[RMDB]
RNA sequence: GGGAACGACUCGAGUAGAGUCGAAAAACAACAGCCGAACAAUACUGCUUCAUGACAACUGCAACUCUAACAUCAGCCUUUCUGUAUGAUUAUACAGCCAUGAAACCAGUCGGUUACAUCAGAGCGCGUGCUGAAGAAACUAUUAGCUUCUUUAGUAAUAGCCGAGAUGAUUCGUCAUCUCGGCUAUAAAAGAAACAACAACAACAAC
Reactivity to 2A3 in 0.01 (KOAc 150mM, MgCl2 10mM, bicine 150mM(pH8.5), 24C), signal-to-noise 1, nucleotides 027 to 156: a000c160a000a010c000a000g040c000c000g010a140a040c100a070a110u140a160c020u030g060c010u020u010c000a060u050g030a020c020a090a000c070u050g030c090a040a040c010u020c010u200a040a140c090a120u030c000a000g060c030c130u080u090u040c000u020g060u110a010u020g090a070u020u180a030u160a060c000a000g010c030c000a030u070g000a020a030a030c020c020a040g050u020c000g050g000u000u070a070c000a010u130c000a020g000a040g100c110g010c060g040u040g070c040u020g000a010a000g060a130a040a000c050u190a130u300u150a080g000c000u070u000c000u000u060u050a020g000u130a020